[RMDB]
RNA sequence: GGGAACGACUCGAGUAGAGUCGAAAAUAUUACAUGAAAGGCUGGCAGUCAGUUGAUAUGCCGGAAAUUCUUCAUCAUUGCCUGCUUUACAGGGAGAAACAUUAUGUCUGAGCGUUCUGCUCGUCAGCUUUUCUUGAUCUUUCGAGAUCAAGAAAAGAAAAGAAACAACAACAACAAC
Reactivity to DMS in 0.01 (KOAc 150mM, MgCl2 10mM, bicine 150mM(pH8.5), 24C), signal-to-noise 4, nucleotides 027 to 126: u000a110u020u010a140c130a060u010g000a060a050a080g010g000c010u000g010g030c000a050g020u010c050a260g010u010u010g000a030u000a070u000g030c020c010g010g010a030a050a080u010u000c060u000u000c020a040u000c110a110u000u000g010c040c000u010g010c130u000u000u000a080c080a050g000g010g000a090g010a090a060a090c110a080u010u000a070u000g010u010c040u010g010a040g000c000g010u000u000c120u010g000c020u010c020g000u000c080a100g010
Reactivity to 2A3 in 0.01 (KOAc 150mM, MgCl2 10mM, bicine 150mM(pH8.5), 24C), signal-to-noise 3, nucleotides 027 to 126: u080a010u030u140a010c020a040u030g060a030a010a000g050g000c000u000g030g000c000a020g020u000c000a070g050u180u050g040a050u170a130u170g010c020c020g000g030a040a060a030u180u030c020u080u020c010a050u040c000a020u060u170g120c000c010u030g050c030u130u130u070a080c040a040g080g050g000a100g030a050a090a000c050a060u140u230a090u260g070u010c090u160g000a010g000c010g050u210u000c080u220g010c010u020c030g020u010c000a020g000